[RMDB]
RNA sequence: GGGAACGACUCGAGUAGAGUCGAAAAAUACACCAGCAGUAGGACUCAGCGACCGUCACAACAAGGUUGUGCUGGUAUCCGACGGUCGUAUAGCCCUGUCUCGCAGGUUGCCUUGCACUGACGUGCCACACCAUUUACAGAUUCGUCUGUAAAUGAAGUCAGCUAAUAGUUUCGACUAUUAGCUGACAAAAGAAACAACAACAACAAC
Reactivity to 2A3 in 0.01 (KOAc 150mM, MgCl2 10mM, bicine 150mM(pH8.5), 24C), signal-to-noise 5, nucleotides 027 to 156: a010u150a010c080a010c020c000a000g010c010a010g020u180a010g010g020a020c010u020c050a000g010c010g000a010c010c000g000u020c020a060c050a210a150c080a210a150g060g010u040u010g030u050g020c020u020g040g010u020a040u040c030c050g010a010c000g000g000u000c000g000u020a030u050a030g000c010c010c000u030g040u020c060u040c060g030c030a030g070g000u080u100g040c020c020u040u110g010c020a010c040u150g080a070c070g010u020g020c040c020a100c010a020c020c000a010u000u000u010a000c000a000g010a020u010u100c160g090u000c060u000g000u000a000a000a000u000g010a030a020
Reactivity to DMS in 0.01 (KOAc 150mM, MgCl2 10mM, bicine 150mM(pH8.5), 24C), signal-to-noise 2, nucleotides 027 to 156: a130u000a070c040a200c000c000a110g060c040a040g020u010a070g000g010a070c010u000c110a170g020c000g020a010c000c000g050u000c010a270c100a120a100c100a080a160g000g040u000u000g040u000g040c000u000g020g000u010a090u000c050c030g000a030c030g020g070u000c040g050u000a090u000a060g000c000c010c010u000g000u010c030u000c060g060c080a090g000g000u000u020g020c030c130u000u000g020c030a090c050u000g020a160c160g010u000g020c030c070a110c040a130c100c000a030u000u000u000a000c000a000g010a090u000u000c300g030u000c010u010g020u000a010a010a020u000g010a090a140